[RMDB]
RNA sequence: GGGAACGACUCGAGUAGAGUCGAAAACGAGUGCAAUAAAGACGCGGUUGCCGAUCGGUAUGGAUGCCACCGUGACGGCUCAAUCACACAAGUGCCAACGAUUACGAGGCGCUCGCUAUUGCUGCGUAAAAGCGACGAUCGUUCGCGAUCGUCGCAACUUGAAAUCAGCGUUCGCGCUGAUUUCAAGAAAAGAAACAACAACAACAAC
Reactivity to 2A3 in 0.01 (KOAc 150mM, MgCl2 10mM, bicine 150mM(pH8.5), 24C), signal-to-noise 1, nucleotides 027 to 156: c020g010a050g080u100g010c030a030a140u080a180a240a060g070a040c090g020c020g000g000u080u120g000c000c010g060a030u030c000g000g080u130a140u200g020g090a000u000g050c020c000a000c010c030g040u000g070a070c030g040g000c020u040c100a010a080u060c000a020c000a020c000a140a050g010u000g070c000c010a050a090c040g000a000u120u090a020c070g020a060g040g020c000g000c000u040c010g030c000u020a070u110u120g040c040u030g000c010g100u110a090a120a060a000g000c000g000a050c000g000a020u000c000g000u100u000c110g040c080g050a000u000c000g000u000c000g000c000a000a000